Conditions: 150 mM KOAc, 10 mM MgCl2 and 150 mM bicine (pH 8.5), 24 C. Structure probing data (DMS and 2A3) for a 177-nucleotide construct. Values cover nucleotides 27 to 126. It was measured as part of the RMDB libraries RFM100 and RFMREP. Reactivities are rounded to 0.1 and cut off at 0 and 3. DMS adducts were read by reverse transcription with MarathonRT.
[RMDB]
RNA sequence: GGGAACGACUCGAGUAGAGUCGAAAAGAGCAGCUUGAGCCGGGCAUUCGCCCGGUCGAACCGUCGAAGUUCGUGGAAGCCGUAAUGGCAGGAAGCGAACGAACGUCGGAACAGGGAAACUCAAGUCCACGAACAUUUAUUUCGAUAAAUGUUCGUGAAAAGAAACAACAACAACAAC
Reactivity to DMS in 0.01 (KOAc 150mM, MgCl2 10mM, bicine 150mM(pH8.5), 24C), signal-to-noise 7, nucleotides 027 to 126: g010a160g010c120a180g000c000u000u000g000a040g010c000c000g000g010g010c010a260u060u050c240g000c000c000c000g010g020u000c020g010a050a090c020c000g000u010c000g010a120a300g010u000u000c000g010u000g000g000a280a100g000c010c000g000u010a080a110u040g010g010c010a040g000g000a300a210g000c000g000a000a010c000g000a050a080c020g020u000c000g000g010a060a170c080a220g000g010g010a060a040a160c010u000c010a030a010g000u000c090
Reactivity to 2A3 in 0.01 (KOAc 150mM, MgCl2 10mM, bicine 150mM(pH8.5), 24C), signal-to-noise 9, nucleotides 027 to 126: g060a020g050c090a000g010c000u010u010g000a000g010c000c000g000g010g000c060a110u230u260c220g000c000c000c000g000g000u000c000g000a010a020c010c000g010u010c010g010a060a010g000u000u000c000g000u020g010g030a050a000g000c000c010g070u250a130a230u300g000g000c010a030g110g090a010a000g010c000g000a000a000c000g010a130a020c010g000u010c000g000g000a030a010c040a070g090g000g060a060a050a020c000u000c010a010a000g010u020c020